[RMDB]
RNA sequence: GGGAACGACUCGAGUAGAGUCGAAAAUGGUCCAGGAGACCUAUGUUAAUUACAAUACUUGUCUGCAACAGCCCAUUGUGUUGCAGCUGAAAUAUCUAUUGAAGGAAGCAGCUACUGGGGGGUGCAAUCUAGCGACUGAAUUCGUUCAGUCGCUAGAAAAAGAAACAACAACAACAAC
Reactivity to DMS in 0.01 (KOAc 150mM, MgCl2 10mM, bicine 150mM(pH8.5), 24C), signal-to-noise 1, nucleotides 027 to 126: u010g000g000u000c020c040a110g010g030a170g000a040c020c020u000a070u000g000u000u000a160a140u000u000a190c100a090a100u000a070c160u000u000g000u050c000u000g000c010a000a000c030a040g020c110c050c050a130u010u000g020u000g000u000u010g010c000a000g000c100u000g000a040a050a110u020a080u010c100u000a070u000u000g020a180a090g020g000a090a070g040c030a040g010c020u000a010c040u000g020g030g000g020g000g000u010g030c140a090a150